[RMDB]
RNA sequence: GGGAACGACUCGAGUAGAGUCGAAAAGUACGUAGACUGUCGGCAAGCUCUAUAUAUGGACACUUACGAAGGGUUUUGGUUGUUUUGUAUCUCAAGCCGACUUUGAGUAUUUGAGGAAAAUACGACAUGAAUCCUGUGACGUUCGCGUCACAGGAAACCUUAAGAUCUGAUUCGUCAGAUCUUAAGGAAAAGAAACAACAACAACAAC
Reactivity to 2A3 in 0.01 (KOAc 150mM, MgCl2 10mM, bicine 150mM(pH8.5), 24C), signal-to-noise 3, nucleotides 027 to 156: g070u050a020c050g010u030a020g020a090c050u040g030u050c010g000g030c040a050a030g030c040u000c040u040a080u020a070u030a050u300g110g030a040c030a010c100u110u120a020c100g100a100a060g020g050g010u030u060u090u110g050g000u000u020g030u000u030u000u050g020u040a120u090c020u010c050a050a010g000c000c000g010a000c000u020u040u040g030a000g000u040a020u000u020u060g060a070g000g150a000a030a030a060u070a000c030g020a020c020a060u190g060a070a050u010c000c010u010g000u010g000a000c000g020u040u030c100g000c000g050u000c000a000c000a010g000g030a000a000a030
Reactivity to DMS in 0.01 (KOAc 150mM, MgCl2 10mM, bicine 150mM(pH8.5), 24C), signal-to-noise 3, nucleotides 027 to 156: g020u010a020c070g020u000a030g020a070c020u010g030u000c010g010g000c020a120a120g010c080u000c020u000a100u000a090u000a090u000g010g010a110c050a020c040u010u000a140c060g030a110a140g010g000g020u000u000u000u000g020g020u000u000g000u000u000u000u010g010u000a090u000c030u000c020a050a200g040c020c000g010a030c030u000u000u000g000a230g020u010a040u000u000u010g010a160g010g000a130a030a040a080u000a060c020g020a160c090a070u010g000a070a130u000c000c000u000g030u000g000a020c010g010u000u010c300g050c020g040u000c010a000c000a000g020g000a000a000a040

Chemical mapping of a 207-nucleotide RNA with 2A3 and DMS. For DMS the reverse transcriptase was MarathonRT. The data come from the RNA Mapping Database (RMDB), library M2RFPK. The RNA was probed in 150 mM KOAc, 10 mM MgCl2 and 150 mM bicine (pH 8.5) at 24 C.